[RMDB]
Structure probing data (2A3) for a 207-nucleotide construct. Conditions: 150 mM KOAc, 10 mM MgCl2 and 150 mM bicine (pH 8.5), 24 C. The 2A3 profile rests on 639 reads. 2A3 adducts were read by reverse transcription with SuperScript II with manganese. Reactivities are given for positions 27 through 156. It was measured as part of the RMDB library ARCHII.
RNA sequence: GGGAACGACUCGAGUAGAGUCGAAAAGGGGUUGUUACGGAUUCGACAGGCAUUAUGAGGCUUGUUCUGCAACUCAUCGGCAGAUGUAAAAAUGCCAGUUAAAUAUAACUGCAAAAAAUACAAACACUUACGCAUUAGCAGCUUAAUAACCUGCCUGGGCCAAUUAAAUGUUCGCAUUUAAUUGGCCAAAAGAAACAACAACAACAAC
Reactivity to 2A3 in 0.01 (KOAc 150mM, MgCl2 10mM, bicine 150mM(pH8.5), 24C), signal-to-noise 2, nucleotides 027 to 156: g070g000g000g010u020u050g020u030u050a040c040g050g050a220u000u100c020g020a020c000a000g000g000c010a000u000u030a030u070g040a040g010g030c020u070u080g050u080u030c080u070g020c040a070a060c000u010c090a010u020c030g010g010c000a010g000a000u010g050u300a000a000a000a040a040u000g000c000c000a010g010u020u050a040a290a030u280a140u060a090a000c010u000g000c080a000a020a000a000a090a040u250a110c070a050a160a020c050a070c180u190u240a040c120g000c000a060u000u090a020g020c000a000g000c010u110u000a010a000u000a010a010c010c090u010g010c000c000u010g010